RNA sequence: GGGAACGACUCGAGUAGAGUCGAAAAGCACGUGGAAGAGUGUUACGUGUGCGCAGAUAGCACGAAAGGAAACUUCGUGAAUGUCACUCUCUGAGGCCAGCAGGACGGUAUUAGAAAAAUACGUGUACAUAAUACCGUUGCUAACGAGGAACGCGGAGAGCUUUCUAUUAUUCGUAAUAGAAAGCUCAAAAGAAACAACAACAACAAC
Reactivity to DMS in 0.01 (KOAc 150mM, MgCl2 10mM, bicine 150mM(pH8.5), 24C), signal-to-noise 4, nucleotides 027 to 156: g000c020a040c020g070u000g010g020a080a070g000a080g040u010g030u000u000a060c060g010u000g030u000g020c050g020c050a180g010a100u000a110g030c000a050c030g000a060a090a100g030g000a130a100a170c060u000u000c020g040u000g000a080a100u000g020u000c020a080c060u000c020u000c040u000g010a180g020g000c040c030a060g020c050a080g000g000a060c010g000g010u000a020u010u000a050g010a020a100a110a110a110u010a060c100g020u000g010u010a130c100a100u000a010a030u000a000c010c010g030u000u000g000c030u010a070a100c050g010a110g030g000a050a090c030g020c040g020g010a280
Reactivity to 2A3 in 0.01 (KOAc 150mM, MgCl2 10mM, bicine 150mM(pH8.5), 24C), signal-to-noise 9, nucleotides 027 to 156: g030c010a000c050g020u050g050g080a100a040g040a040g060u070g030u090u120a060c050g020u040g020u040g040c080g000c030a030g060a140u100a050g060c010a010c030g040a070a050a030g100g030a120a070a020c030u030u030c010g020u010g040a100a110u110g030u060c020a020c020u050c000u000c040u070g030a030g060g030c040c040a000g010c030a040g060g040a000c010g010g010u010a010u020u030a040g140a060a110a020a030a010u220a080c110g060u100g040u100a030c020a070u040a010a010u000a020c010c000g020u010u040g030c010u020a050a020c030g010a030g030g040a070a030c020g010c040g050g040a050